Annotation
The record gives the reactivity of an RNA of 207 nucleotides to 2A3 and DMS. Reactivities are given for positions 27 through 156. It was measured as part of the RMDB library OK3TST. The RNA was probed in 150 mM KOAc, 10 mM MgCl2 and 150 mM bicine (pH 8.5) at 24 C.
RNA sequence: GGGAACGACUCGAGUAGAGUCGAAAACGUCGAAAACGACAACGUCGAAAAUCCCUGUUAAUUGCAGGUAAAAUGUGUCAAAUUAAUGCCACAGAUAAUCGUAAUAAGUUAUAUGAUUGGUUGCUAACAAGCGCCAAAUGGAUAAUCCGCAGGGAGCCAAUGUUAUGAAUUUCGAUUCAUAACAUUGAAAAGAAACAACAACAACAAC
Reactivity to 2A3 in 0.01 (KOAc 150mM, MgCl2 10mM, bicine 150mM(pH8.5), 24C), signal-to-noise 7, nucleotides 027 to 156: c050g000u020c010g040a090a080a090a120c030g060a040c040a110a040c080g130u120c050g060a050a060a040a050u010c010c020c000u010g010u030u100a150a120u100u100g040c060a060g020g020u060a070a050a030a080u030g010u000g020u020c000a030a050a120u230u210a110a120u110g010c000c000a010c000a010g030a070u120a080a040u100c020g010u010a050a030u070a170a070g020u080u080a090u020a050u170g090a080u040u010g000g030u070u250g000c010u050a210a060c060a230a000g000c000g000c000c000a010a040a030u050g000g010a030u040a140a040u090c050c030g000c020a010g010g000g010a010g000c020
Reactivity to DMS in 0.01 (KOAc 150mM, MgCl2 10mM, bicine 150mM(pH8.5), 24C), signal-to-noise 4, nucleotides 027 to 156: c050g000u010c000g020a080a070a110a170c090g010a100c040a030a030c050g030u000c030g010a110a090a100a160u010c040c000c010u010g010u000u000a110a120u010u000g020c020a070g030g000u010a060a060a100a090u000g020u000g020u000c050a060a090a180u000u000a090a090u010g010c010c020a080c010a040g000a060u000a050a040u010c040g020u000a100a170u000a090a100g020u000u000a070u010a060u000g000a090u000u000g010g000u000u010g070c020u010a130a130c170a070a110g030c030g000c000c000a030a060a080u010g020g000a200u000a050a100u000c040c050g000c070a100g010g030g010a070g010c160